[RMDB]
RNA sequence: GGGAACGACUCGAGUAGAGUCGAAAAGAAAGAAAGAAAGAAAAGUAGCACUUAUAGGAACUGUCUGGUGAGCACACGAAAGUGUGAAUUUAAUCAUAGCGCUAAUUAAAUCCUGCUAUGGGGUAAACGUAGAAAACGUAUUCGUACGUUUUCUACGAAAAGAAACAACAACAACAAC
Reactivity to DMS in 0.01 (KOAc 150mM, MgCl2 10mM, bicine 150mM(pH8.5), 24C), signal-to-noise 6, nucleotides 027 to 126: g010a100a080a060g010a070a060a060g000a060a060a090g000a040a050a080a070g000u000a070g020c040a090c050u010u030a080u020a070g010g010a060a100c060u010g010u000c040u000g010g010u010g000a140g020c000a000c010a020c000g000a110a110a090g000u010g010u000g010a060a060u020u020u010a020a040u000c000a010u000a010g000c010g030c220u040a080a080u040u020a010a010a070u040c000c010u000g000c000u000a010u000g000g010g000g010u000a070a050a140
Reactivity to 2A3 in 0.01 (KOAc 150mM, MgCl2 10mM, bicine 150mM(pH8.5), 24C), signal-to-noise 6, nucleotides 027 to 126: g050a000a070a000g120a050a050a010g050a010a110a010g070a030a100a020a000g040u060a010g030c030a020c050u070u030a050u090a200g090g030a090a050c020u030g050u050c020u030g050g020u070g080a050g050c020a010c000a000c040g080a100a060a040g010u010g000u010g020a030a040u070u100u160a050a060u070c010a010u010a010g000c010g000c070u020a010a000u060u140a030a040a100u050c000c000u000g000c000u000a000u010g000g010g000g010u010a050a070a020
Conditions: 150 mM KOAc, 10 mM MgCl2 and 150 mM bicine (pH 8.5), 24 C. Structure probing data (DMS and 2A3) for a 177-nucleotide construct. Reactivities are given for positions 27 through 126. It was measured as part of the RMDB libraries RFM100 and RFMREP. DMS adducts were read by reverse transcription with MarathonRT.